Record summary: Structure probing data (2A3 and DMS) for a 177-nucleotide construct. For 2A3, 2,603 sequencing reads were counted. 2A3 adducts were read by reverse transcription with SuperScript II with manganese. Values cover nucleotides 27 to 126. DMS adducts were read by reverse transcription with MarathonRT. High 2A3 reactivity points to a flexible backbone, as in loops and unpaired stretches. The DMS profile rests on 2,882 reads. Reactivities are rounded to 0.1 and cut off at 0 and 3.
[RMDB]
RNA sequence: GGGAACGACUCGAGUAGAGUCGAAAAGAUCACGCGGCCUGCGCGAGUACGUACUGGCCAGUACUGGAUCGAUCGCGCUGAUCCUCGGCGCGGCCAGGCCUACUGGCGCGAUCGCGGCCGUACCGCGCAGUACCUCGGACUUCGGUCCGAGGUACUGAAAAGAAACAACAACAACAAC
Reactivity to 2A3 in 0.01 (KOAc 150mM, MgCl2 10mM, bicine 150mM(pH8.5), 24C), signal-to-noise 2, nucleotides 027 to 126: g050a090u190c070a000c180g030c020g020g010c010c010u130g010c000g000c000g010a040g020u010a020c030g010u040a300c040u060g070g000c010c000a000g040u030a110c060u070g040g020a050u080c070g030a060u100c050g000c010g050c170u090g040a070u130c020c070u080c100g000g080c070g020c030g000g000c000c000a030g000g000c000c000u000a040c010u000g060g000c010g020c000g060a040u110c050g000c000g060g000c000c000g000u020a040c000c030g040c000g000
Reactivity to DMS in 0.01 (KOAc 150mM, MgCl2 10mM, bicine 150mM(pH8.5), 24C), signal-to-noise 3, nucleotides 027 to 126: g010a100u010c080a150c060g020c010g020g030c220c000u000g040c020g020c010g010a060g030u000a030c150g000u000a150c010u010g010g000c020c000a100g020u000a060c060u010g030g000a080u000c110g010a090u010c070g010c050g000c050u000g020a040u000c070c060u000c130g030g000c020g030c090g000g030c010c010a050g000g000c050c050u000a040c020u000g000g020c000g000c030g000a050u010c080g000c070g020g000c120c030g000u000a170c020c010g010c110g000